[RMDB]
RNA sequence: GGGAACGACUCGAGUAGAGUCGAAAAAUGAACGUGGUGGGCGUAAGUUAGUAGAAGAUCUAAUGGUACGCGGUGGGUUUUCGACUGUACUCGAAACCACCACCACCACCAAGUCGUUGCCACCGAAUGUACUCUAUAGAUUCGUCUAUAGAGUACAAAAAGAAACAACAACAACAAC
Reactivity to DMS in 0.01 (KOAc 150mM, MgCl2 10mM, bicine 150mM(pH8.5), 24C), signal-to-noise 9, nucleotides 027 to 126: a060u010g000a030a030c060g010u000g010g030u000g000g010g010c000g010u000a130a270g010u000u000a010g010u000a100g010a140a150g000a090u010c010u000a010a020u000g000g020u000a010c020g000c010g020g030u000g000g010g000u000u000u000u000c010g010a020c050u000g000u000a030c080u000c000g010a040a070a070c020c010a030c010c010a150c110c100a050c020c020a020c010c080a070a030g010u000c010g010u000u000g000c020c010a180c180c140g000a100a090
Reactivity to 2A3 in 0.01 (KOAc 150mM, MgCl2 10mM, bicine 150mM(pH8.5), 24C), signal-to-noise 5, nucleotides 027 to 126: a000u230g010a030a000c020g010u010g000g000u000g000g030g000c010g000u000a030a010g010u000u010a010g010u030a050g060a300a020g030a090u030c000u010a000a010u040g240g040u060a000c000g000c020g010g010u010g010g020g000u020u030u030u100c010g010a010c030u120g060u190a030c000u010c010g000a020a000a000c000c000a000c000c000a020c020c000a010c000c000a000c010c000a020a000g000u000c000g010u010u020g140c010c010a040c020c060g100a120a040
An RNA of 177 nucleotides, treated with DMS and 2A3 and read out base by base. The RNA was probed in 150 mM KOAc, 10 mM MgCl2 and 150 mM bicine (pH 8.5) at 24 C. The 2A3 profile rests on 18,529 reads. For 2A3 the reverse transcriptase was SuperScript II with manganese.